[RMDB]
RNA sequence: GGGAACGACUCGAGUAGAGUCGAAAAACUUCUGUUGGAGGAUGCACGCCUCGUAGUAGUGCAGGUUCAUCGCAGGCAACCAUUCCACAGGAUCACCCUAAAUUGAAGAGAAGUGUGCCCGAUGGCAGCAUGACAUAAGGUUCGCCUUAUGUCAUGCAAAAGAAACAACAACAACAAC
Reactivity to 2A3 in 0.01 (KOAc 150mM, MgCl2 10mM, bicine 150mM(pH8.5), 24C), signal-to-noise 5, nucleotides 027 to 126: a000c060u090u040c010u030g080u100u100g040g020a040g050g020a050u060g000c020a000c030g070c040c020u040c120g040u060a140g040u040a020g010u010g020c020a030g030g090u090u070c040a040u020c130g040c140a040g000g030c020a060a020c000c020a080u070u020c010c000a030c000a020g010g010a040u090c040a110c030c010c000u100a260a230a160u230u210g080a110a040g060a040g020a190a080g140u130g050u090g120c000c040c030g070a040u100g030g030c050a040
Reactivity to DMS in 0.01 (KOAc 150mM, MgCl2 10mM, bicine 150mM(pH8.5), 24C), signal-to-noise 3, nucleotides 027 to 126: a060c140u010u000c020u000g000u010u020g000g030a110g010g000a050u010g000c090a060c110g010c050c000u020c090g000u000a110g050u020a050g040u020g030c030a090g000g030u000u000c040a080u050c030g010c190a080g000g000c040a050a130c100c030a200u030u000c000c030a020c060a130g000g000a070u010c160a070c070c010c000u020a040a090a090u020u000g000a060a110g000a100g000a060a070g050u010g000u000g020c000c030c040g000a130u020g010g010c110a130